An RNA of 207 nucleotides, treated with DMS and 2A3 and read out base by base. DMS adducts were read by reverse transcription with MarathonRT. The reactions ran in a buffer of 150 mM KOAc, 10 mM MgCl2 and 150 mM bicine (pH 8.5), at 24 C.

[RMDB]
RNA sequence: GGGAACGACUCGAGUAGAGUCGAAAAAGGUUCGCUGUGGUGCAACUCUUAUUAGUAACUAAUCCAAAGCAAGUAUAGGAGAACAGGUUUUUAACUAUUUUUAGGCAGAUAAAUAAUAGUAUUUGACAAAAUCGAUUGUCGUUCGCGACAAUCGAAAGACUUAUGCAUACUUCGGUAUGCAUAAGUCAAAAGAAACAACAACAACAAC
Reactivity to DMS in 0.01 (KOAc 150mM, MgCl2 10mM, bicine 150mM(pH8.5), 24C), signal-to-noise 1, nucleotides 027 to 156: a080g030g010u000u010c070g010c050u020g020u010g020g060u000g020c010a090a090c030u000c010u010u010a050u000u000a050g000u000a050a080c030u000a070a090u020c090c080a070a050a100g000c050a060a100g030u000a090u000a110g000g000a030g020a030a100c060a180g020g020u000u020u000u010u020a060a110c010u000a030u000u000u000u010u000a030g000g000c040a090g000a110u010a020a030a060u000a030a010u000a090g000u000a120u010u000u010g010a190c070a100a030a160a200u000c000g000a070u000u020g000u000c010g040u010u010c210g010c020g020a050c010a010a030u000c030g000a010a040a070
Reactivity to 2A3 in 0.01 (KOAc 150mM, MgCl2 10mM, bicine 150mM(pH8.5), 24C), signal-to-noise 3, nucleotides 027 to 156: a030g060g000u040u020c040g020c020u020g020u030g070g030u040g050c020a050a050c000u010c050u100u120a130u050u130a090g020u060a090a090c050u030a070a060u080c060c050a110a070a040g050c020a050a000g030u070a070u070a110g020g030a020g040a070a020c050a050g030g000u050u010u000u010u050a040a000c000u010a010u000u010u010u020u010a040g000g010c020a020g020a060u040a050a050a030u090a030a000u020a020g010u010a160u070u120u170g050a060c060a040a120a010a070u020c000g000a000u000u000g000u000c000g000u010u010c120g010c010g090a010c000a000a000u000c000g000a000a000a000
It was measured as part of the RMDB library M2RFPK. 2A3 adducts were read by reverse transcription with SuperScript II with manganese. For DMS, 2,314 sequencing reads were counted.